This 207-nucleotide RNA was probed chemically with 2A3.
Reactivities are given for positions 27 through 156.
The RNA was probed in 150 mM KOAc, 10 mM MgCl2 and 150 mM bicine (pH 8.5) at 24 C.

[RMDB]
RNA sequence: GGGAACGACUCGAGUAGAGUCGAAAAUGGCUAACCAAAGCCUCAGCCCUCCCGGGCAUAAGGGAUCCUCCUACCUCAGCCUCCAGUGUAGCUGGGACCACAGACGCACGCUGUCAUGCCAGGCUAAUUUUUAAAUUUUUCGUAGAGACUGGGUCUAGCUGCAUUAAAAUUUCGAUUUUAAUGCAGCAAAAGAAACAACAACAACAAC
Reactivity to 2A3 in 0.01 (KOAc 150mM, MgCl2 10mM, bicine 150mM(pH8.5), 24C), signal-to-noise 1, nucleotides 027 to 156: u050g000g000c010u030a070a000c090c010a150a100a040g000c000c010u040c030a040g010c000c020c000u020c000c000c000g020g060g000c030a060u110a080a130g030g000g000a040u090c030c020u030c000c010u020a070c020c010u050c040a020g010c000c000u000c060c010a000g020u010g000u120a080g020c000u010g000g000g100a040c010c030a070c020a040g050a040c020g090c050a010c010g000c010u000g060u020c010a030u030g060c050c010a040g110g000c010u050a040a070u120u010u030u060u090a050a160a170u030u110u030u090u160c010g010u020a000g010a000g040a140c010u060g010g000g020u000c000u030a010